[RMDB]
RNA sequence: GGGAACGACUCGAGUAGAGUCGAAAAAACGAACGGGAGUGCUUUCCGGUGACGCCAUCUACGCGAUGCCGCCGGACGUGUCGUUGCUGGAUCUGGUCGGGCGCGGCGCCGACGGUCUGCGCACGGCAGGAUUUAGCAAUUUCGAUUGCUAAAUCCUAAAAGAAACAACAACAACAAC
Reactivity to DMS in 0.01 (KOAc 150mM, MgCl2 10mM, bicine 150mM(pH8.5), 24C), signal-to-noise 9, nucleotides 027 to 126: a050a040c060g010a070a050c070g000g000g010a100g020u000g010c090u000u000u000c010c010g010g010u000g010a110c160g010c120c040a040u000c030u000a110c210g010c110g010a030u000g010c040c010g010c010c010g000g000a050c300g000u000g010u000c020g020u000u000g010c020u000g010g000a150u000c040u010g020g010u000c020g010g000g010c030g010c060g010g020c100g010c030c020g010a060c080g000g010u000c020u000g020c040g010c020a030c020g010g010c080
Reactivity to 2A3 in 0.01 (KOAc 150mM, MgCl2 10mM, bicine 150mM(pH8.5), 24C), signal-to-noise 7, nucleotides 027 to 126: a000a010c060g030a030a010c050g030g010g030a070g050u090g030c030u080u090u020c010c000g000g010u010g030a050c070g050c110c010a020u000c020u060a060c250g050c110g040a020u020g020c010c010g000c000c010g000g000a000c010g040u050g030u030c020g030u040u060g010c020u030g030g040a060u020c030u100g050g020u010c010g000g010g010c070g000c020g080g020c080g030c030c020g120a110c060g010g010u010c020u040g010c020g000c020a020c030g010g000c020
Source information:
This 177-nucleotide RNA was probed chemically with DMS and 2A3. It was measured as part of the RMDB library OK2TRN.